[RMDB]
RNA sequence: GGGAACGACUCGAGUAGAGUCGAAAAGGGGUCUCCUUAGUACCUUCAACAGCUAUGAACUACAGCUGAAGCCUCCACGGCUGCAUAGACAUGAAGAGAACUGGAGACGGAGGCACCCAAACCCUAUAACUGAUGAUUCGUCAUCAGUUAUAGGGAACCACAGUCUGAUGUUCGCAUCAGACUGUGGAAAAGAAACAACAACAACAAC
Reactivity to 2A3 in 0.01 (KOAc 150mM, MgCl2 10mM, bicine 150mM(pH8.5), 24C), signal-to-noise 2, nucleotides 027 to 156: g060g000g000g000u010c020u030c000c000u010u040a020g020u080a080c000c000u040u070c070a190a170c020a080g060c020u010a000u030g050a090a120c070u170a110c260a000g000c000u030g020a070a010g060c000c000u010c000c020a020c000g020g000c010u000g000c020a000u020a020g040a180c120a190u300g020a080a020g050a010g000a040a040c080u100g000g000a000g000a000c020g000g020a010g000g000c020a060c000c000c000a060a060a150c000c000c000u010a000u000a000a000c000u000g000a000u000g020a020u060u080c220g040u000c100a000u000c000a000g000u020u000a000u000a000g000g000g000a000a020

Chemical mapping of a 207-nucleotide RNA with 2A3.